[RMDB]
RNA sequence: GGGAACGACUCGAGUAGAGUCGAAAAUAAAUAUAUUACUGCCCUUAGAUCAAAGCUAUAUGCAUUAGUACCUCUAUGUUCUGGAGUAAUCAAAGAUCCGCUUAGACGAGCCUAUAUGGAAGAGCUACUCAUGUUGUGUCUUCGGACACAACAUGAGAAAAGAAACAACAACAACAAC
Reactivity to DMS in 0.01 (KOAc 150mM, MgCl2 10mM, bicine 150mM(pH8.5), 24C), signal-to-noise 2, nucleotides 027 to 126: u020a050a120a040u030a110u010a130u010u000a000c090u030g000c000c000c000u000u020a060g000a110u000c050a050a090a080g000c030u010a050u000a130u000g000c010a110u010u020a050g000u000a090c110c060u010c000u020a100u010g000u010u000c050u030g040g030a060g000u070a150a070u070c110a030a070a070g000a050u000c040c040g020c090u010u000a110g000a090c080g020a120g000c120c000u040a040u040a010u030g000g000a030a050g000a060g000c040u010a150
Reactivity to 2A3 in 0.01 (KOAc 150mM, MgCl2 10mM, bicine 150mM(pH8.5), 24C), signal-to-noise 2, nucleotides 027 to 126: u060a000a030a000u200a010u030a070u080u180a060c020u120g080c000c000c000u010u080a100g010a010u070c070a080a000a010g010c000u070a050u050a080u280g020c010a010u000u040a030g020u090a110c010c010u010c010u080a060u060g120u110u020c040u070g000g050a000g030u020a020a020u040c130a090a000a010g080a040u010c040c000g030c050u040u110a020g100a060c010g000a060g010c010c040u110a100u020a050u160g020g030a020a010g020a030g090c000u020a030